[RMDB]
RNA sequence: GGGAACGACUCGAGUAGAGUCGAAAAAUUGCAGUGAGCCGAGAUCACACCACUGCCCUCCAGCCUGGGCAACAAAGCGAGACUCUGUCUCAAAAAAAAAAGAGCAAUCUGGUUUUUCAUCCCAUUGCAACUGACAGUCCCUGUAGCUUGAGUGCAAUACGGUAAAUACUUUCGAGUAUUUACCGUAAAAAGAAACAACAACAACAAC
Reactivity to DMS in 0.01 (KOAc 150mM, MgCl2 10mM, bicine 150mM(pH8.5), 24C), signal-to-noise 1, nucleotides 027 to 156: a100u000u020g030c010a060g000u010g010a030g010c060c090g020a160g020a110u010c060a070c050a070c060c030a040c030u010g000c010c020c010u010c010c010a230g000c020c020u000g010g010g040c010a060a050c040a030a040a080g000c040g000a170g000a180c020u010c100u000g010u000c000u010c010a040a030a000a030a000a040a080a090a050a120g000a080g040c060a040a110u000c020u000g040g020u000u000u000u000u000c060a100u010c010c020c010a170u000u000g020c020a060a100c040u000g000a120c070a120g000u010c010c000c030u000g000u000a110g010c020u000u020g020a130g020u010g000c040a090a230
Reactivity to 2A3 in 0.01 (KOAc 150mM, MgCl2 10mM, bicine 150mM(pH8.5), 24C), signal-to-noise 3, nucleotides 027 to 156: a010u070u050g000c010a020g020u000g060a040g090c070c050g100a050g010a140u110c070a040c000a020c090c010a030c030u040g000c020c010c000u020c010c010a020g010c000c010u020g000g020g000c020a050a060c060a070a140a020g080c060g020a000g020a010c030u070c140u300g030u010c020u060c100a010a030a080a050a000a000a000a000a000a000g050a000g010c000a020a060u030c090u090g000g030u050u040u030u060u160c050a070u070c020c000c020a020u020u050g000c020a060a100c040u060g020a040c030a030g110u180c000c010c020u000g080u100a010g010c000u030u030g040a020g010u020g010c010a030a130